[RMDB]
RNA sequence: GGGAACGACUCGAGUAGAGUCGAAAAGUACCUCCUGCUCCUUCAAGAGCCUCCCUAAGGGAGAAGAAGAUCUAUACUUCCACUUUGUUUGCUGCACAUGUGGCAACAAGAUUGCUACCCUGAUUUGGGACACUUGAGAGAACUUGAAAAAAAUGACAAUGAAAGUCUCAUUCGUGAGACUUUCAUUAAAAGAAACAACAACAACAAC
Reactivity to DMS in 0.01 (KOAc 150mM, MgCl2 10mM, bicine 150mM(pH8.5), 24C), signal-to-noise 1, nucleotides 027 to 156: g000u040a190c020c010u000c010c000u000g000c000u000c000c030u090u010c160a080a040g000a110g040c120c050u000c000c040c010u000a250a100g060g000g000a090g000a060a060g000a100a050g010a050u000c140u040a230u010a230c010u010u010c020c040a090c060u010u000u000g000u000u000u000g030c000u010g000c030a150c130a160u000g010u000g000g050c040a010a040c000a040a060g000a290u000u000g030c010u000a120c010c040c000u000g000a190u000u020u000g040g000g010a080c090a050c060u010u000g010a110g030a090g000a000a030c050u000u000g000a000a000a120a090a100a120a060u000g000a160c080
Reactivity to 2A3 in 0.01 (KOAc 150mM, MgCl2 10mM, bicine 150mM(pH8.5), 24C), signal-to-noise 3, nucleotides 027 to 156: g020u030a090c000c030u040c000c020u010g010c010u010c000c020u060u050c030a030a020g010a050g050c030c040u010c030c000c000u000a010a030g020g010g030a040g010a010a020g010a020a000g030a050u090c060u190a100u100a170c010u050u010c030c000a010c050u030u040u120g070u100u080u090g020c010u020g050c020a130c090a300u300g010u020g020g000c000a000a010c000a010a020g050a070u060u170g050c010u080a210c000c000c010u030g030a090u090u040u180g000g040g000a000c030a010c020u010u000g000a020g010a010g110a050a060c080u100u110g090a050a090a020a010a080a030a050u300g060a040c070